[RMDB]
RNA sequence: GGGAACGACUCGAGUAGAGUCGAAAAUUGCAUCAUUUGAUACAAGCGAUGCAUUUAGCAUAUAGUGAUCGCGCGCAAUACUUGGCGGAUGAUAAUUUUCAUGAGGUGCCUGUACAGUCAUUAAUUGGAUACCGCGGUCAUUCGUGACCGCGGUAUCAAAAGAAACAACAACAACAAC
Reactivity to 2A3 in 0.01 (KOAc 150mM, MgCl2 10mM, bicine 150mM(pH8.5), 24C), signal-to-noise 1, nucleotides 027 to 126: u000u000g000c000a060u000c000a000u030u000u180g060a060u110a210c060a000a000g130c120g000a000u000g120c000a000u200u140u020a020g000c000a070u110a040u170a140g180u140g150a000u000c000g000c000g000c000g000c160a150a180u020a300c000u140u060g010g010c060g010g010a000u000g020a000u020a000a110u170u130u080u050c090a000u090g150a000g010g030u090g100c060c070u150g020u160a130c000a000g090u000c000a000u040u000a260a000u070u080g060